[RMDB]
RNA sequence: GGGAACGACUCGAGUAGAGUCGAAAAGAUAUGGACACAUGAACUACCGUGCUGGCGUCGAGGAUCGUCAUCUAUUCGGAAACGAAUAGAUGACGGGAGACGCUGGCACGGCAUGUGUCCUAAGUCACUUAGUCUAUAACUUCGGUUAUAGACUAAGAAAAGAAACAACAACAACAAC
Reactivity to 2A3 in 0.01 (KOAc 150mM, MgCl2 10mM, bicine 150mM(pH8.5), 24C), signal-to-noise 3, nucleotides 027 to 126: g040a020u060a020u210g000g000a000c010a000c010a010u010g070a140a110c100u220a090c300c010g010u000g000c010u000g030g010c000g000u000c010g040a300g100g070a090u070c010g000u000c000a000u010c000u000a000u030u010c010g060g000a100a080a100c000g010a010a000u010a010g000a010u000g000a000c010g000g000g000a020g000a010c010g030c000u000g000g010c000a000c000g000g010c030a000u000g000u010g000u000c000c000u000a000a000g020u000c000a000
Reactivity to DMS in 0.01 (KOAc 150mM, MgCl2 10mM, bicine 150mM(pH8.5), 24C), signal-to-noise 3, nucleotides 027 to 126: g010a060u000a300u010g000g000a020c000a000c000a000u010g010a080a060c100u020a300c010c010g020u000g000c000u000g010g010c030g030u000c000g000a120g010g000a060u010c000g000u000c000a000u000c000u000a010u000u000c000g000g000a110a100a200c010g010a020a010u000a000g000a000u000g000a000c000g000g000g010a080g010a020c000g020c000u000g000g010c000a000c000g000g000c000a000u000g000u000g010u010c000c000u000a010a060g000u000c020a280
Structure probing data (2A3 and DMS) for a 177-nucleotide construct. DMS adducts were read by reverse transcription with MarathonRT. Source: RMDB library TTRINS, as collected in RNAgym. Conditions: 150 mM KOAc, 10 mM MgCl2 and 150 mM bicine (pH 8.5), 24 C. Reactivities are given for positions 27 through 126. For 2A3, 13,735 sequencing reads were counted. Reactivities are rounded to 0.1 and cut off at 0 and 3.